[RMDB]
RNA sequence: GGGAACGACUCGAGUAGAGUCGAAAACGAUCUGUUCGCAGAUCGAGCUACGGAGACGUAGCAAAGCGCGCGAGGGCCCGGGCGCGCGCCCUACCGGAAAUAAAACCAUAUCCACGUGUGCUAGGAUAUGGCCGGGCCCAAAGAAAAAGCACACGGACGAUUAUAUGAGUUUCGACUCAUAUAAUCGAAAAGAAACAACAACAACAAC
Reactivity to 2A3 in 0.01 (KOAc 150mM, MgCl2 10mM, bicine 150mM(pH8.5), 24C), signal-to-noise 2, nucleotides 027 to 156: c000g010a000u000c000u010g040u080u060c170g010c090a000g000a010u000c000g020a030g000c000u000a000c000g030g010a080g030a100c020g010u000a000g020c000a030a100a010g000c000g000c000g000c010g000a070g000g010g000c000c010c000g040g010g000c010g000c020g010c010g030c000c000c000u080a060c030c040g140g110a090a080a080u240a050a110a050a010c000c000a000u010a000u020c010c000a040c170g010u000g000u000g000c010u010a020g010g000a000u000a000u000g010g000c000c010g000g000g010c000c000c000a000a020a000g020a000a060a010a000a010g000c000a000c000a000c000g010g070a030
An RNA of 207 nucleotides, treated with 2A3 and read out base by base.
Reactivities are given for positions 27 through 156.